[RMDB]
RNA sequence: GGGAACGACUCGAGUAGAGUCGAAAAACCUGAUGAUUCGUCAUCAGGUCACAUGCCGCCCGAACGCCUUCCUGACCGGGCGGAUUCACUUUAAAUGGAGCACUGCUGCAUCAUUCGUGAUGCAGAAGAGGAAGGAGCAGUUCGCUGCUCCUUCCUCAAAAGAAACAACAACAACAAC
Reactivity to DMS in 0.01 (KOAc 150mM, MgCl2 10mM, bicine 150mM(pH8.5), 24C), signal-to-noise 1, nucleotides 027 to 126: a000c000c000u000g020a000u000g010a070u000u010c150g020u030c000a010u000c000a010g010g000u000c110a070c160a070u020g000c030c020g000c000c010c000g000a040a230c120g000c080c060u010u000c090c050u000g010a130c180c070g000g000g030c010g000g000a010u020u000c130a050c140u000u010u000a090a040a070u010g000g040a040g000c140a040c200u000g000c010u010g000c000a010u000c000a020u000u000c180g030u030g000a000u000g010c000a000g000a010a090
Reactivity to 2A3 in 0.01 (KOAc 150mM, MgCl2 10mM, bicine 150mM(pH8.5), 24C), signal-to-noise 2, nucleotides 027 to 126: a000c000c010u000g010a010u000g000a010u000u080c170g100u000c080a000u020c000a010g000g010u020c000a060c010a090u180g020c010c000g000c000c000c000g010a090a010c080g060c040c060u030u010c010c000u050g040a060c020c000g030g000g000c010g000g000a010u070u050c040a030c030u090u170u280a030a140a080u220g060g030a020g040c080a020c160u120g000c040u000g000c010a010u000c000a020u050u090c130g050u030g030a020u010g000c000a000g000a010a000
Structure probing data (DMS and 2A3) for a 177-nucleotide construct. The RNA was probed in 150 mM KOAc, 10 mM MgCl2 and 150 mM bicine (pH 8.5) at 24 C. It was measured as part of the RMDB library M2PK50. 2A3 adducts were read by reverse transcription with SuperScript II with manganese.